[RMDB]
The record gives the reactivity of an RNA of 177 nucleotides to 2A3 and DMS.
RNA sequence: GGGAACGACUCGAGUAGAGUCGAAAAACGGCAAUAAUUGCUGCAAGUUGCUGGUCAAUGGCAACAUAGAGUGGUGUUUUGCCUUCUUCACCUAACUGAGCAGCAAUCGCUUGGAAUGAGCUGGUGACACCAGGAUGGUGUUCGCACCAUCCUGGUGAAAAGAAACAACAACAACAAC
Reactivity to 2A3 in 0.01 (KOAc 150mM, MgCl2 10mM, bicine 150mM(pH8.5), 24C), signal-to-noise 2, nucleotides 027 to 126: a000c010g030g050c030a030a000u080a210a060u110u080g020c000u030g010c010a030a040g020u030u010g010c070u060g020g100u180c080a060a200u210g010g010c010a020a000c010a010u040a010g270a060g040u100g000g000u010g050u040u050u030u050g010c000c000u020u000c040u020u020c010a020c000c000u030a040a030c010u000g000a010g060c030a000g010c000a010a130u080c070g000c000u020u040g040g050a150a060u120g030a050g070c090u080g010g010u080g040a030
Reactivity to DMS in 0.01 (KOAc 150mM, MgCl2 10mM, bicine 150mM(pH8.5), 24C), signal-to-noise 2, nucleotides 027 to 126: a090c140g020g000c030a020a050u020a070a050u000u000g030c000u000g000c040a140a120g000u000u000g000c060u000g020g000u010c280a100a050u000g000g000c020a010a030c010a090u000a080g000a100g000u010g010g010u000g020u000u010u000u000g010c020c000u000u010c040u000u000c050a060c030c010u010a110a110c030u000g010a070g020c010a030g000c150a100a040u000c210g020c050u000u000g030g000a070a090u000g010a130g010c100u000g010g000u000g000a160

For 2A3 the reverse transcriptase was SuperScript II with manganese.